[RMDB]
RNA sequence: GGGAACGACUCGAGUAGAGUCGAAAACUGAGACUUUACGUGCCACUGAAGAGGCGUCUAAGCAGUCUUAUGCUAUUGCCACCAUCAAAGAAAUUGUUGGUGAGCGCCAACUAUUACUUGUGUGGGAUCCCAGAAUACUGUUCGCAGUAUUCUGGGAAAAAGAAACAACAACAACAAC
Reactivity to 2A3 in 0.01 (KOAc 150mM, MgCl2 10mM, bicine 150mM(pH8.5), 24C), signal-to-noise 1, nucleotides 027 to 126: c030u030g000a010g010a020c010u030u020u060a030c070g020u040g040c020c000a060c040u110g090a160a000g110a150g060g000c000g030u000c020u030a060a040g000c050a010g030u000c040u030u070a090u080g030c030u060a080u150u090g040c010c010a060c000c010a000u070c030a010a050a080g140a100a090a060u040u020g040u000u000g000g040u060g070a130g020c080g010c010c030a010a000c030u080a060u100u040a010c020u060u070g030u040g000u000g110g060g030a040
Reactivity to DMS in 0.01 (KOAc 150mM, MgCl2 10mM, bicine 150mM(pH8.5), 24C), signal-to-noise 1, nucleotides 027 to 126: c040u000g000a030g010a110c010u010u020u000a060c170g000u020g010c030c010a060c040u020g020a140a190g000a100g000g040c060g000u010c050u000a090a180g010c210a040g000u000c050u000u010a040u010g020c090u000a070u010u000g020c030c000a070c000c060a010u000c090a050a050a160g000a100a060a040u010u000g000u000u000g000g020u000g030a150g050c200g000c020c000a020a010c040u010a050u020u000a140c040u010u000g000u010g040u000g000g000g000a120